[RMDB]
Structure probing data (2A3 and DMS) for a 177-nucleotide construct. Values cover nucleotides 27 to 126.
RNA sequence: GGGAACGACUCGAGUAGAGUCGAAAACUAUGUAUUGGAUCUUUGACAGUUUUAGCUCCCAAGACCACUUUUGAUUUAGUCUUUGUUGACGUGGCACCCACAAUGGUCGAAACGUGAUACCUCGCUUCAAGAUGAUCAUUUUCGAAUGAUCAUCUUGAAAAGAAACAACAACAACAAC
Reactivity to 2A3 in 0.01 (KOAc 150mM, MgCl2 10mM, bicine 150mM(pH8.5), 24C), signal-to-noise 5, nucleotides 027 to 126: c020u030a050u170g100u060a110u110u160g090g040a070u030c040u080u060u100g060a030c050a060g030u020u000u030u090a040g030c010u010c050c000c000a010a020g050a010c010c020a030c080u080u120u110u100g150a150u060u050u160a040g000u010c010u050u070u080g140u070u130g040a030c050g000u030g020g020c090a020c010c000c000a050c020a100a140u120g020g020u040c020g070a070a030a030c110g030u030g040a030u070a070c000c010u030c010g060c010u000u010
Reactivity to DMS in 0.01 (KOAc 150mM, MgCl2 10mM, bicine 150mM(pH8.5), 24C), signal-to-noise 3, nucleotides 027 to 126: c020u000a070u030g010u040a090u020u020g010g000a080u010c050u010u000u000g010a080c040a030g010u000u000u050u030a130g000c100u000c030c010c010a060a080g000a050c020c030a040c110u000u000u020u000g020a090u000u000u010a070g000u010c020u000u000u000g010u010u000g030a030c040g020u020g000g020c070a090c050c020c010a080c170a050a060u020g010g010u000c030g020a020a060a060c070g010u010g010a100u020a070c070c030u020c060g010c160u000u030